[RMDB]
RNA sequence: GGGAACGACUCGAGUAGAGUCGAAAAGCUCUGUAAUGGGAUGGGAUCCGAAGCCCCAUUGAGGGAUAAUACAGGCUCUCCCAUCCAACUCCUAUUCCAACACGUCCUCGUCGUACAGAGAGGUAACUAAGGUAUAGCUCCUUCGGGAGCUAUACAAGUUAGACCCAUUGUUCGCAAUGGGUCUAACAAAAGAAACAACAACAACAAC
Reactivity to 2A3 in 0.01 (KOAc 150mM, MgCl2 10mM, bicine 150mM(pH8.5), 24C), signal-to-noise 1, nucleotides 027 to 156: g000c050u000c030u140g030u090a080a080u150g050g010g000a000u020g000g000g000a080u220c000c000g060a050a000g100c020c000c000c020a140u080u170g040a240g010g040g000a030u130a150a020u060a130c170a050g000g000c020u000c000u000c020c000c000a030u000c020c020a000a000c000u000c000c020u050a160u080u050c000c020a020a020c020a030c100g050u050c000c040u030c010g130u050c030g010u040a100c040a000g010a030g000a020g050g000u090a110a030c040u070a100a000g160g030u000a010u000a000g000c000u000c000c000u000u000c110g090g000g000a020g000c000u000a000u000a000c000a030a000